Notes
Source: RMDB library M2RFPK, as collected in RNAgym. This 207-nucleotide RNA was probed chemically with 2A3. For 2A3, 509 sequencing reads were counted. Reactivities are given for positions 27 through 156. For 2A3 the reverse transcriptase was SuperScript II with manganese. The reactions ran in a buffer of 150 mM KOAc, 10 mM MgCl2 and 150 mM bicine (pH 8.5), at 24 C.
[RMDB]
RNA sequence: GGGAACGACUCGAGUAGAGUCGAAAAAACAAACAUCAAAUCGCAUAGCAAAGAGUCAAAAAAAUAGAGAGCUUUGCGAGACCUACCAAUGGUGAAGAGAUACCAUCCAAGGAGCUGAAGAGAAAUCGAGAGCUCACGGCGUUCGCGCCGUGAGCAAUCUCUACAGUGAGUUCGCUCACUGUAGAGAAAAAGAAACAACAACAACAAC
Reactivity to 2A3 in 0.01 (KOAc 150mM, MgCl2 10mM, bicine 150mM(pH8.5), 24C), signal-to-noise 1, nucleotides 027 to 156: a000a000c010a020a020a010c050a010u080c040a000a140a080u010c010g000c010a010u050a010g000c040a030a190a050g030a100g080u130c080a150a130a130a170a060a120a030u300a090g130a030g040a000g000c000u050u040u020g000c010g030a020g010a020c010c000u000a000c000c080a020a030u050g000g040u080g090a190a100g000a010g000a070u080a080c010c000a030u040c030c000a030a030g030g020a030g040c080u100g040a040a000g080a020g110a080a040a080u090c050g030a010g010a000g080c020u000c010a000c000g000g080c000g050u090u070c100g000c000g030c000c030g000u000g030a000g000c000a000a000